[RMDB]
RNA sequence: GGGAACGACUCGAGUAGAGUCGAAAAGAUAUGGACCGUGUAGGGAGAUUAUCGGAAACGAUGAAUCGAAGAACUACCGGUCCUAAGUCAAAAGCCGAGGUAAUGUCUUCGGACAUUACCUCGGCAAGAUACUUAAAGCGUUCGCGCUUUAAGUAUCAAAAGAAACAACAACAACAAC
Reactivity to DMS in 0.01 (KOAc 150mM, MgCl2 10mM, bicine 150mM(pH8.5), 24C), signal-to-noise 4, nucleotides 027 to 126: g000a040u000a300u000g020g000a010c000c000g000u020g010u010a010g000g010g010a100g010a010u000u000a040u000c010g000g000a140a090a180c010g000a020u000g000a020a020u000c000g000a090a170g000a130a170c010u000a000c000c010g000g010u000c000c000u000a000a050g000u000c030a110a080a160a150g010c000c000g020a000g000g000u000a000a010u000g000u010c000u000u010c270g020g020a000c000a000u000u000a000c000c010u000c000g000g000c010a010a000
Reactivity to 2A3 in 0.01 (KOAc 150mM, MgCl2 10mM, bicine 150mM(pH8.5), 24C), signal-to-noise 3, nucleotides 027 to 126: g030a010u070a020u150g000g010a010c020c010g090u170g000u250a010g040g010g010a030g000a010u000u020a010u020c010g010g040a080a070a020c010g000a020u170g300a060a050u030c020g140a300a020g030a030a030c010u000a010c000c010g010g000u000c000c000u000a000a010g010u010c000a020a040a100a060g020c020c020g010a020g010g020u010a020a000u020g000u010c050u110u200c300g000g000a000c000a010u010u000a010c000c000u000c010g010g010c000a000a000

The data come from the RNA Mapping Database (RMDB), library TTRDEL.
The record gives the reactivity of an RNA of 177 nucleotides to DMS and 2A3.
2A3 adducts were read by reverse transcription with SuperScript II with manganese.
The RNA was probed in 150 mM KOAc, 10 mM MgCl2 and 150 mM bicine (pH 8.5) at 24 C.
The DMS profile rests on 5,056 reads.